[RMDB]
RNA sequence: GGGAACGACUCGAGUAGAGUCGAAAAAAUAUACGCUUGUAUGGGGGUUAUGUAUGUAUUCACAACUUAACGUAUAUCUAAACUGUAACUCCAAUUUUUUUUUUAAAUGCUUAGGAUUGGUGAGGAAGUGAUACCCAUUAUUCGUAAUGGGUAUCACAAAAGAAACAACAACAACAAC
Reactivity to 2A3 in 0.01 (KOAc 150mM, MgCl2 10mM, bicine 150mM(pH8.5), 24C), signal-to-noise 2, nucleotides 027 to 126: a000a000u020a000u000a000c010g000c030u180u140g070u090a190u170g030g000g000g050g030u070u010a040u110g180u010a070u110g070u090a120u130u110c060a040c000a050a090c070u100u080a070a010c040g030u020a030u010a000u090c140u140a000a100a170c050u050g080u140a060a000c020u010c010c010a010a060u010u000u000u000u000u020u010u010u080u170a120a120a030u150g030c030u050u080a060g000g020a030u000u040g010g000u070g040a030g010g060a170a060
Reactivity to DMS in 0.01 (KOAc 150mM, MgCl2 10mM, bicine 150mM(pH8.5), 24C), signal-to-noise 1, nucleotides 027 to 126: a050a010u030a000u020a020c080g050c140u010u000g000u010a060u010g000g000g000g020g000u000u000a020u010g000u000a090u050g030u000a040u020u010c050a050c070a030a040c070u010u010a080a080c010g000u000a000u000a020u010c040u030a110a060a180c210u020g010u030a050a180c040u000c050c000a010a010u000u000u000u000u050u000u000u000u140u080a030a030a090u000g000c050u040u030a040g000g020a060u030u020g000g000u000g020a050g000g030a090a160
Chemical mapping of a 177-nucleotide RNA with 2A3 and DMS. The RNA was probed in 150 mM KOAc, 10 mM MgCl2 and 150 mM bicine (pH 8.5) at 24 C. It was measured as part of the RMDB library OK1LIB. For 2A3 the reverse transcriptase was SuperScript II with manganese. For DMS, 1,913 sequencing reads were counted.